[RMDB]
Structure probing data (DMS and 2A3) for a 177-nucleotide construct. DMS adducts were read by reverse transcription with MarathonRT. For DMS, 1,195 sequencing reads were counted. The RNA was probed in 150 mM KOAc, 10 mM MgCl2 and 150 mM bicine (pH 8.5) at 24 C. For 2A3 the reverse transcriptase was SuperScript II with manganese. The 2A3 profile rests on 920 reads. The data come from the RNA Mapping Database (RMDB), library OK2TST.
RNA sequence: GGGAACGACUCGAGUAGAGUCGAAAAUGGCCGAAUGUUCGCGGGCAAUGCUGUCCGGUGGCCCAAGAAUUUACGGUCGAUAUUUUACCAGGCGAUUGCUGGAAUCGUUUCUGACAAAGAAGCAACAUAGCUGAUGAUGAUUCGUCAUCAUCAGCUAAAAAGAAACAACAACAACAAC
Reactivity to DMS in 0.01 (KOAc 150mM, MgCl2 10mM, bicine 150mM(pH8.5), 24C), signal-to-noise 2, nucleotides 027 to 126: u010g000g010c000c000g020a080a100u000g000u000u010c000g000c300g010g040g000c000a070a130u000g050c070u000g000u020c200c150g030g030u000g010g000c000c000c000a060a300g000a000a000u000u000u000a170c010g020g000u000c010g020a090u000a010u000u000u000u030a100c130c090a110g000g010c020g000a150u010u010g010c030u030g000g000a040a010u010c020g000u000u010u000c000u020g010a140c250a030a080a050g010a050a070g000c110a050a020c140a170
Reactivity to 2A3 in 0.01 (KOAc 150mM, MgCl2 10mM, bicine 150mM(pH8.5), 24C), signal-to-noise 1, nucleotides 027 to 126: u140g010g000c000c000g030a110a090u090g000u010u010c020g000c110g000g000g000c040a000a160u220g000c070u100g100u240c100c040g010g060u080g070g000c000c000c000a000a020g010a000a000u070u070u050a010c000g000g000u000c020g000a000u000a090u050u050u060u050a110c060c000a000g010g010c040g140a170u040u160g000c030u110g080g080a000a010u110c020g000u010u000u000c010u040g060a030c050a020a150a070g070a080a050g070c010a030a080c010a050